Structure probing data (DMS and 2A3) for a 207-nucleotide construct. Reactivities are given for positions 27 through 156. It was measured as part of the RMDB library OK3TST. 2A3 adducts were read by reverse transcription with SuperScript II with manganese. The reactions ran in a buffer of 150 mM KOAc, 10 mM MgCl2 and 150 mM bicine (pH 8.5), at 24 C.
[RMDB]
RNA sequence: GGGAACGACUCGAGUAGAGUCGAAAAGAGUGCUUGGCAGGGUAGAGCUCCACUACAGUUCUCAGUGGCAGUUCACAUCCACUGGGUGGGCCGUUUGGGUUUUGCAUGUCUUCUAAUUUAUCUGCAGACUCUGGGAUGUUACUAUUUUAGGCCUGCCACAUCAUGUAGUUUUCGAACUACAUGAUGUAAAAGAAACAACAACAACAAC
Reactivity to DMS in 0.01 (KOAc 150mM, MgCl2 10mM, bicine 150mM(pH8.5), 24C), signal-to-noise 5, nucleotides 027 to 156: g010a100g020u000g010c030u000u010g020g040c030a050g000g030g050u000a090g010a110g020c010u010c020c030a090c030u000a090c050a140g010u010u000c020u000c030a090g000u000g010g000c090a070g000u010u000c090a100c040a130u010c020c000a070c040u010g010g030g020u000g010g030g020c020c030g010u000u010u000g020g010g010u000u000u000u000g010c030a070u000g020u010c060u000u000c090u010a060a130u000u010u000a060u020c080u000g000c030a070g010a030c010u000c030u000g020g010g010a080u000g010u000u000a110c130u000a100u000u000u000u000a090g010g000c010c000u000g020c010c080
Reactivity to 2A3 in 0.01 (KOAc 150mM, MgCl2 10mM, bicine 150mM(pH8.5), 24C), signal-to-noise 7, nucleotides 027 to 156: g080a010g030u100g030c070u070u030g040g000c020a030g020g030g030u080a040g010a020g050c030u010c030c010a030c030u160a080c030a090g070u170u040c060u010c040a010g010u020g020g000c060a020g010u100u090c050a030c010a070u020c020c000a060c090u040g020g010g010u040g000g020g000c000c000g030u080u170u140g020g000g010u010u060u200u040g010c020a050u080g030u050c010u170u050c030u160a110a200u130u170u170a120u080c050u030g010c010a000g020a040c010u000c050u080g040g020g000a020u030g050u160u070a070c070u080a160u110u130u070u110a030g010g020c000c000u000g000c000c000